[RMDB]
RNA sequence: GGGAACGACUCGAGUAGAGUCGAAAAGAUAUGGACGUCCACGUCGCAACAGCUCGGAAACGAGACAUGCGAAGUGGAACGUCCUAAGUCAAACAAUCCCGAUGUUCUUCGGAACAUCGGGAUUGAAGUCAUCAAGACCGUUCGCGGUCUUGAUGACAAAAGAAACAACAACAACAAC
Reactivity to DMS in 0.01 (KOAc 150mM, MgCl2 10mM, bicine 150mM(pH8.5), 24C), signal-to-noise 1, nucleotides 027 to 126: g000a060u000a300u000g000g000a020c000g010u000c000c000a000c020g000u000c000g040c010a050a080c240a150g000c030u000c000g000g070a150a100a250c000g010a000g020a040c090a140u000g000c000g020a030a030g050u000g000g000a020a050c000g000u000c000c000u000a000a070g030u000c020a090a040a290c020a020a010u000c000c000c000g040a040u000g000u000u010c000u000u030c260g050g000a030a020c020a000u000c010g000g000g000a000u000u020g000a010a030